An RNA of 177 nucleotides, treated with 2A3 and DMS and read out base by base.

[RMDB]
RNA sequence: GGGAACGACUCGAGUAGAGUCGAAAAUGGUGUUAAGUGGAAUAAGUGGAAAAAUAUACAUAUAUGUACAGGGGGCUACAUAUAUGUAUAUGCCCCCUCGAGGUAGUAUAAGUAGGUAUAAGGUGGAGGUAUUUACCAGUUUCGACUGGUAAAUACCAAAAGAAACAACAACAACAAC
Reactivity to 2A3 in 0.01 (KOAc 150mM, MgCl2 10mM, bicine 150mM(pH8.5), 24C), signal-to-noise 2, nucleotides 027 to 126: u100g020g020u050g010u130u070a070a040g070u040g040g040a090a080u080a170a050g000u150g020g060a090a110a070a110a000u020a000u000a000c000a020u030a000u000a030u030g020u030a040c110a080g060g030g020g010g040c040u010a010c000a000u050a000u010a010u020g000u010a000u000a000u010g010c020c000c010c000c000u010c020g010a000g000g000u030a020g040u030a090u000a150a010g050u070a020g090g000u080a060u040a120a000g090g000u050g030g050a050
Reactivity to DMS in 0.01 (KOAc 150mM, MgCl2 10mM, bicine 150mM(pH8.5), 24C), signal-to-noise 2, nucleotides 027 to 126: u020g010g020u020g010u040u010a050a100g010u000g000g030a070a080u070a080a070g020u020g010g000a000a130a060a090a050u000a000u010a000c000a050u020a050u010a040u000g000u020a030c100a100g030g000g000g010g010c150u000a010c020a010u010a020u000a020u020g010u000a010u010a010u000g010c090c040c010c030c000u000c020g000a070g000g000u010a020g020u000a050u010a040a060g030u000a050g010g010u010a070u010a030a030g000g030u000g010g030a200
It was measured as part of the RMDB library OK1LIB.
DMS adducts were read by reverse transcription with MarathonRT.
The reactions ran in a buffer of 150 mM KOAc, 10 mM MgCl2 and 150 mM bicine (pH 8.5), at 24 C.